[RMDB]
RNA sequence: GGGAACGACUCGAGUAGAGUCGAAAAGUCUUUCUUUCCGAGAAUUCCUUUGAUGUUCCCUAGCCAGGGAUUGUCUUCCUCAAGUUUCUUGAUUUUCUUCUUCGCCUUCCGGAGCUCCUUCUCGAGACAAGACACCGGUUCGCCGGUGUCAAAAGAAACAACAACAACAAC
Reactivity to DMS in 0.01 (KOAc 150mM, MgCl2 10mM, bicine 150mM(pH8.5), 24C), signal-to-noise 3, nucleotides 027 to 129: g030u020c080u000u000u000c030u000u000u000c000c000g050a100g030a080a120u010u020c000c000u020u030u030g000a140u040g020u000u030c040c000c020u040a160g010c110c070a080g050g000g030a060u010u030g020u020c030u000u030c000c000u070c100a100a160g020u060u030u000c060u010u000g050a170u000u000u000u000c060u060u000c060u000u000c020g030c000c000u020u050c020c070g050g020a120g060c070u010c000c050u030u030c000u010c050g020a150g070a080c060a100a040
Reactivity to 2A3 in 0.01 (KOAc 150mM, MgCl2 10mM, bicine 150mM(pH8.5), 24C), signal-to-noise 3, nucleotides 027 to 129: g020u000c000u000u030u010c010u040u040u020c040c040g030a040g000a060a050u050u000c040c000u100u050u100g070a060u080g050u030u060c000c000c040u010a040g080c080c090a020g040g000g010a010u010u100g030u030c010u020u020c000c020u070c040a090a050g010u000u080u000c000u030u040g070a100u090u080u040u010c030u030u000c000u030u040c040g000c020c000u050u030c010c000g000g000a010g020c020u020c010c010u030u010c010u000c020g040a040g000a010c030a020a020

The record gives the reactivity of an RNA of 170 nucleotides to DMS and 2A3.
2A3 adducts were read by reverse transcription with SuperScript II with manganese.
The reactions ran in a buffer of 150 mM KOAc, 10 mM MgCl2 and 150 mM bicine (pH 8.5), at 24 C.
For DMS, 10,711 sequencing reads were counted.
Reactivities are given for positions 27 through 129.